[RMDB]
An RNA of 177 nucleotides, treated with 2A3 and DMS and read out base by base.
It was measured as part of the RMDB libraries RFM100 and RFMREP.

RNA sequence: GGGAACGACUCGAGUAGAGUCGAAAACCAGAUUCACAAGCCCCACCAAGAGGAUCACCCCAGGAACGCUUGGAGGCUGAGGAGUUCACUGAGGCUACUGCAUCUUGAGACUCAGGAUGAAGACCCAUUCAAUUAAACGUUUCGACGUUUAAUUGAAAAAAGAAACAACAACAACAAC
Reactivity to 2A3 in 0.01 (KOAc 150mM, MgCl2 10mM, bicine 150mM(pH8.5), 24C), signal-to-noise 8, nucleotides 027 to 126: c010c000a010g070a140u150u120c060a030c010a110a040g000c010c010c000c010a050c010c010a040a010g030a040g070g050a040u070c040a090c010c000c010c010a010g050g050a110a030c030g000c050u000u030g030g010a020g040g000c020u020g020a060g030g020a030g040u060u050c050a040c080u040g020a030g040g000c010u080a050c020u150g040c020a060u050c040u050u110g030a060g030a090c040u020c060a010g030g010a020u060g040a030a030g130a200c010c000c000a010
Reactivity to DMS in 0.01 (KOAc 150mM, MgCl2 10mM, bicine 150mM(pH8.5), 24C), signal-to-noise 9, nucleotides 027 to 126: c010c010a130g000a080u010u010c070a070c090a130a070g000c010c010c030c130a090c050c040a040a040g010a090g000g010a120u010c060a130c060c030c020c040a090g000g010a060a110c080g010c030u000u010g010g000a110g000g010c010u000g000a110g010g000a070g010u000u010c060a070c070u000g000a090g020g000c040u010a060c040u000g000c050a030u010c040u000u010g010a100g000a100c130u010c010a030g010g010a030u010g000a080a060g010a170c020c000c020a160
Conditions: 150 mM KOAc, 10 mM MgCl2 and 150 mM bicine (pH 8.5), 24 C.